Structure probing data (2A3) for a 177-nucleotide construct. The data come from the RNA Mapping Database (RMDB), library OK1LIB. The 2A3 profile rests on 343 reads.
[RMDB]
RNA sequence: GGGAACGACUCGAGUAGAGUCGAAAACUUAUUUUCAUUCAAUGAAUAACUUACUUUUGCUAUCCAUAACAUAUCAUCCCAUGUUAAGUAUAGAUCAUUAGUAUCAUUGAAUGCAUGAUCUAUAUUGAUUUUAGCGCUGCUUCGGCAGCGCUAAAAUAAAAGAAACAACAACAACAAC
Reactivity to 2A3 in 0.01 (KOAc 150mM, MgCl2 10mM, bicine 150mM(pH8.5), 24C), signal-to-noise 1, nucleotides 027 to 126: c000u080u170a000u110u010u000u000c020a000u000u300c000a020a020u110g140a120a130u300a130a000c000u010u000a010c000u000u300u110u000g000c000u000a010u000c000c000a020u000a020a000c000a000u040a010u010c050a040u000c000c000c010a000u000g000u120u110a040a040g000u000a000u000a000g170a000u000c000a000u000u100a040g040u000a010u070c000a000u000u000g240a190a000u070g000c040a000u070g000a000u040c010u010a080u040a050u170u110g110